An RNA of 177 nucleotides, treated with 2A3 and DMS and read out base by base. The RNA was probed in 150 mM KOAc, 10 mM MgCl2 and 150 mM bicine (pH 8.5) at 24 C. Reactivities are given for positions 27 through 126. It was measured as part of the RMDB library RFMREP. For DMS the reverse transcriptase was MarathonRT. The DMS profile rests on 35,336 reads.
RNA sequence: GGGAACGACUCGAGUAGAGUCGAAAACGUAGUUCUGGUGAAGGAGUAAAUUAAACUGCCUCGCACCGCCGUACUCAUUUUUACCUCGAGUAUGGUGGCCGUGGAAUGGUGGUUUUUUAUGCAGUCGCAUACAAUAUGUGUUCGCACAUAUUGUAUGAAAAGAAACAACAACAACAAC
Reactivity to 2A3 in 0.01 (KOAc 150mM, MgCl2 10mM, bicine 150mM(pH8.5), 24C), signal-to-noise 9, nucleotides 027 to 126: c020g030u050a020g060u060u050c040u070g080g010u100g060a060a030g050g060a060g040u060a010a070a030u060u100a030a020a000c000u010g010c000c000u010c010g010c000a010c000c000g000c000c000g010u000a000c000u000c030a080u060u070u150u190u290a180c050c070u090c120g000a000g000u000a000u010g010g000u000g010g000c070c050g010u020g060g090a150a090u180g010g010u010g010g000u020u000u000u010u010u020a080u060g040c030a030g070u100c040g010
Reactivity to DMS in 0.01 (KOAc 150mM, MgCl2 10mM, bicine 150mM(pH8.5), 24C), signal-to-noise 9, nucleotides 027 to 126: c100g010u010a060g010u000u000c040u000g010g020u000g010a080a060g010g010a240g000u000a040a050a050u000u000a010a020a020c010u000g010c000c000u000c020g010c030a200c010c000g020c000c010g030u000a000c000u020c010a120u000u010u010u010u020a130c300c200u000c170g000a010g010u000a000u000g000g020u000g000g010c220c100g010u000g010g010a070a050u010g020g060u000g010g000u000u000u000u000u000u000a050u010g010c070a090g010u000c110g000